Structure probing data (2A3 and DMS) for a 177-nucleotide construct.
RNA sequence: GGGAACGACUCGAGUAGAGUCGAAAAAUUGCUGCGCCACAAGCCGCCUUGGCCGAUAAUGAUUGCAAUGUGCCUAUGGACAAGUGGCAGUCACGCGAUGCGGUGCAGCAGAUGGCGGCUUCGCUUAGCACUACUACUGAUUCGUCAGUAGUAGUGCAAAAGAAACAACAACAACAAC
Reactivity to 2A3 in 0.01 (KOAc 150mM, MgCl2 10mM, bicine 150mM(pH8.5), 24C), signal-to-noise 5, nucleotides 027 to 126: a010u090u060g000c000u010g000c010g010c000c010a060c040a060a010g020c010c000g020c000c030u090u130g060g030c010c020g040a040u080a170a070u090g040a020u010u070g000c040a060a120u140g030u070g100c000c030u200a180u280g060g010a030c030a070a050g070u110g120g000c000a000g000u020c000a000c040g060c030g020a030u110g010c030g000g010u020g010c010a010g000c020a000g040a090u100g020g000c000g030g020c040u110u090c040g020c030u040u080a010
Reactivity to DMS in 0.01 (KOAc 150mM, MgCl2 10mM, bicine 150mM(pH8.5), 24C), signal-to-noise 5, nucleotides 027 to 126: a080u010u000g010c020u000g000c030g010c010c020a080c060a090a110g010c050c030g030c070c050u000u000g000g020c010c030g010a090u000a090a120u010g000a040u010u000g020c020a100a080u010g030u000g000c010c060u020a120u010g010g000a040c020a050a080g020u000g000g000c000a020g010u000c000a050c200g010c070g010a090u000g020c050g000g000u000g010c010a010g010c030a020g000a060u000g000g030c030g000g010c090u000u000c100g020c050u000u000a140
Source information: High 2A3 reactivity points to a flexible backbone, as in loops and unpaired stretches. DMS adducts were read by reverse transcription with MarathonRT. For DMS, 7,491 sequencing reads were counted. For 2A3 the reverse transcriptase was SuperScript II with manganese.